Structure probing data (2A3 and DMS) for a 177-nucleotide construct. Source: RMDB library OK1LIB, as collected in RNAgym. For 2A3, 710 sequencing reads were counted.
RNA sequence: GGGAACGACUCGAGUAGAGUCGAAAAGACGCCUGUGUGGCGAAGCGAGCAAUGGAAUAAGCUGCAAUAGAUGAUGAGAAGGAAGCGGCAAGAUGGAAAGCUCGCAAUGAGAUCCAUCUACCAGAGAAUGGUGACUAGGUUUCGACCUAGUCACCAUAAAAGAAACAACAACAACAAC
Reactivity to 2A3 in 0.01 (KOAc 150mM, MgCl2 10mM, bicine 150mM(pH8.5), 24C), signal-to-noise 1, nucleotides 027 to 126: g060a000c050g040c010c000u000g010u020g080u280g130g030c000g030a000a000g130c000g000a000g090c010a020a030u100g080g200a020a020u080a150a100g000c000u030g050c010a000a000u020a150g100a220u180g030a050u080g040a020g060a060a040g080g000a220a030g050c000g000g040c100a070a000g000a010u000g000g000a140a000a050g150c000u000c040g000c000a000a100u210g020a090g000a000u010c000c000a000u000c000u030a190c000c030a000g000a000g110a130
Reactivity to DMS in 0.01 (KOAc 150mM, MgCl2 10mM, bicine 150mM(pH8.5), 24C), signal-to-noise 1, nucleotides 027 to 126: g020a060c040g010c000c000u010g160u000g050u050g040g010c000g010a060a080g000c080g000a080g010c090a210a100u010g000g000a100a090u060a060a130g030c050u000g020c030a080a160u000a020g050a130u000g000a080u030g000a060g000a140a140g000g020a210a190g000c060g000g020c040a000a100g010a010u000g000g000a080a110a140g000c000u060c020g010c170a070a010u010g000a020g000a130u000c000c000a030u000c000u000a110c050c020a060g040a110g000a100
For 2A3 the reverse transcriptase was SuperScript II with manganese. Values cover nucleotides 27 to 126. DMS adducts were read by reverse transcription with MarathonRT.